[RMDB]
Conditions: 150 mM KOAc, 10 mM MgCl2 and 150 mM bicine (pH 8.5), 24 C.
This 177-nucleotide RNA was probed chemically with 2A3.
RNA sequence: GGGAACGACUCGAGUAGAGUCGAAAACACAGUAUACUGCCACCCCUGUGAGAAUACUUUUAGUACAGGCGAGUACACGCUCUAUACUACCACCCCUGUAAGAAUACUUUUAGUACAGGCGUGUACAGCGCCAGACUAUGUUCGCAUAGUCUGGCGCAAAAGAAACAACAACAACAAC
Reactivity to 2A3 in 0.01 (KOAc 150mM, MgCl2 10mM, bicine 150mM(pH8.5), 24C), signal-to-noise 2, nucleotides 027 to 126: c060a000c010a000g080u100a100u060a070c050u080g040c000c000a050c000c000c010c000u030g010u020g070a070g020a060a020u040a200c050u030u080u090u080a000g090u030a060c000a000g030g030c040g100a040g010u050a000c000a010c000g000c000u110c000u040a010u000a100c000u050a000c000c010a040c010c030c000c000u020g010u050a000a010g090a240a040u200a230c030u100u080u070u100a000g040u000a020c040a050g000g020c010g050u000g000u000a000c000a000